[RMDB]
RNA sequence: GGGAACGACUCGAGUAGAGUCGAAAAAGGGAAGAAAAUAAUUUUGAAAGGAGAUUCCGCCCCAGCUUGCGGUGCGGCCGAAAGGCUGUAAGGCAUCCCGGAGAGGGGAGGCAAGGCGAAAGCCAAAAACGGUACACCAUCUUCGGAUGGUGUACAAGCCAUGAUUCUAGUUCGCUAGAAUCAUGGCAAAAGAAACAACAACAACAAC
Reactivity to 2A3 in 0.01 (KOAc 150mM, MgCl2 10mM, bicine 150mM(pH8.5), 24C), signal-to-noise 1, nucleotides 027 to 156: a000g040g030g050a090a030g090a090a120a030a060u130a140a200u160u260u150u180g040a070a090a110g010g010a090g020a030u080u020c000c000g010c080c030c000c010a000g050c030u010u120g050c040g010g090u050g060c030g020g000c000c000g140a110a050a000g020g000c000u000g040u140a080a070g030g030c010a000u010c000c000c010g030g000a040g010a000g010g010g000g010a010g040g000c040a020a080g000g070c000g030a030a000a000g000c020c020a010a080a000a000a080c100g030g000u000a000c000a000c010c000a020u000c000u050u020c070g040g000a000u000g000g030u000g000u000a010c000a000a000